[RMDB]
RNA sequence: GGGAACGACUCGAGUAGAGUCGAAAAUGGGCCGCUGAUCGACAUGGAUUCCCAGGUGAUCGGCAUCAAUACUGCCGGCAAGUCACUGUCGGACAGCGCCAGUGGGCUGAGCUUUGCGAUCCCGGUCCCGCUCGCACCCAUUCGUGGGUGCGAGCGGAAAAGAAACAACAACAACAAC
Reactivity to 2A3 in 0.01 (KOAc 150mM, MgCl2 10mM, bicine 150mM(pH8.5), 24C), signal-to-noise 1, nucleotides 027 to 126: u000g000g000g040c080c000g000c010u020g000a110u030c070g010a020c050a110u160g110g020a090u040u020c020c100c080a110g020g050u120g070a120u030c000g020g000c000a060u060c000a000a180u270a170c000u040g000c000c060g010g030c130a100a000g000u010c010a000c160u010g020u020c000g000g050a010c000a040g010c010g000c040c000a000g070u140g030g040g140c230u100g030a040g030c040u030u110u150g030c060g090a110u010c000c000c000g000g030u050c000
The record gives the reactivity of an RNA of 177 nucleotides to 2A3. The reactions ran in a buffer of 150 mM KOAc, 10 mM MgCl2 and 150 mM bicine (pH 8.5), at 24 C. Values are in units of 0.01, from 0 to 300, in steps of 10.